[RMDB]
RNA sequence: GGGAACGACUCGAGUAGAGUCGAAAAGGCAGCACCUCCAGUCACUGCAAUGUGCUUUCUCUCGAAAACACAAUUGAGAAAGAAACAUAGCUCAUCUUGGUUCACCUAUCGAAUGGAGAACGCAGGCCAUUUCAUACAAUUGGAAGGAGAGAGAUUCCAGGUACUGCCAAUUCGUUGGCAGUACCUGAAAAGAAACAACAACAACAAC
Reactivity to 2A3 in 0.01 (KOAc 150mM, MgCl2 10mM, bicine 150mM(pH8.5), 24C), signal-to-noise 2, nucleotides 027 to 156: g100g010c020a020g010c040a120c050c020u000c040c020a060g040u060c030a000c240u050g020c080a030a050u090g050u050g020c000u000u100u000c020u000c000u050c020g050a100a120a150a020c140a080c010a100a200u080u050g010a010g070a070a050a000g010a040a100a000c050a150u150a060g020c030u010c090a100u080c020u020u090g020g000u050u040c010a010c130c010u110a130u210c090g100a100a070u180g000g010a000g000a050a010c070g000c090a000g040g060c050c030a040u010u060u050c030a050u090a140c060a060a080u070u090g080g010a060a060g120g000a000g000a010g000a000g040a060u100u060c080
An RNA of 207 nucleotides, treated with 2A3 and read out base by base. It was measured as part of the RMDB library OK3TST.